[RMDB]
RNA sequence: GGGAACGACUCGAGUAGAGUCGAAAAGGAUUCGUACGCGAAUCCACUGAGUCGUGAGACUCAGAACAUCGGCGUGAGCCGAUGAAAUAAAAAUAAUGACGAAUAAGGUGCAGCUUCGGCUGCACACCGCUCGGUGACGAGCGGAACUCUCGCUACGGCGAGAGAAGCAGAUCGUGAGAUCUGCAUUUUCCGGUGGUCUGGUCCCGGACCACCGUUACUCCAUUCAGCUUCUUCGGAACCUGUUCGGAGGAAUUAAACGGGCACCAAGUGUCAGCUUCGGCUGACACAAAAGAAACAACAACAACAAC
Reactivity to 2A3 in 0.01 (KOAc 150mM, MgCl2 10mM, bicine 150mM(pH8.5), 24C), signal-to-noise 1, nucleotides 027 to 266: g000g010a010u000u000c000g010u080a060c300g020c010g030a010a020u030c000c000a010c000u000g000a000g000u000c020g040u080g110a080g000a000c020u000c000a020g010a020a010c000a000u000c000g000g030c020g040u090g080a060g000c000c020g000a000u010g000a000a020a000u140a010a070a040a020a010u300a110a110u090g100a050c070g000a030a060u090a180a080g100g000u000g000c020a000g000c000u070u130c260g120g000c000u000g000c010a000c000a010c010c000g000c010u020c010g060g060u060g080a060c030g010a000g000c020g010g000a000a010c000u000c000u000c000g000c020u020a050c250g120g000c000g000a000g000a000g010a010a010g000c000a000g000a000u000c000g000u020g020a050g000a000u000c000u020g000c010a000u120u060u020u020c020c020g010g000u000g010g000u000c000u020g000g180u300c010c000c010g020g000a000c010c010a000c030c010g000u000u000a000c000u020c000c000a060u070u020c000a010g010c000u000u010c010u000u040c070g100g010a010a000c010c000u020g060u140u040c080g010g000a010g000g000a000a000u060u080a060a020a020c020g030g050g060c000a020c040c010a140a010